[RMDB]
This 177-nucleotide RNA was probed chemically with 2A3 and DMS.
For DMS, 2,145 sequencing reads were counted.
RNA sequence: GGGAACGACUCGAGUAGAGUCGAAAAUUUACGGUAUUCGUACCGUAAACGAGCAAGCAAGCAGCGCAACGAGACAAGACGAUAAUAAGAUCGAGCAAGCUGAUAGUAGGAUCUUCGGAUCCUACAAAUAACGCAAGUUGUUCGCAACUUGCGUUAUAAAAGAAACAACAACAACAAC
Reactivity to 2A3 in 0.01 (KOAc 150mM, MgCl2 10mM, bicine 150mM(pH8.5), 24C), signal-to-noise 1, nucleotides 027 to 126: u010u000u000a010c000g000g000u020a010u050u080c130g010u010a030c000c000g030u000a000a000a000c020g000a020g100c030a080a050g020c000a030a000g050c000a010g040c020g000c030a040a040c060g030a010g060a080c040a080a040g040a040c040g050a030u040a170a060u130a130a050g060a090u060c040g010a030g010c030a020a050g030c030u070g050a090u050a090g000u000a020g000g010a000u000c020u010u000c140g030g000a000u000c000c000u000a000c000a000a000
Reactivity to DMS in 0.01 (KOAc 150mM, MgCl2 10mM, bicine 150mM(pH8.5), 24C), signal-to-noise 3, nucleotides 027 to 126: u000u000u000a000c010g010g010u000a010u000u000c230g040u010a000c000c010g020u000a000a000a030c080g010a110g000c090a060a080g010c080a080a070g020c040a070g010c080g000c070a030a070c090g000a110g000a060c090a060a070g020a090c040g000a060u000a080a090u000a090a120g000a080u000c050g010a070g010c070a060a100g000c020u020g010a050u000a110g000u000a010g010g000a010u000c000u000u000c140g000g000a010u000c000c000u010a000c010a010a040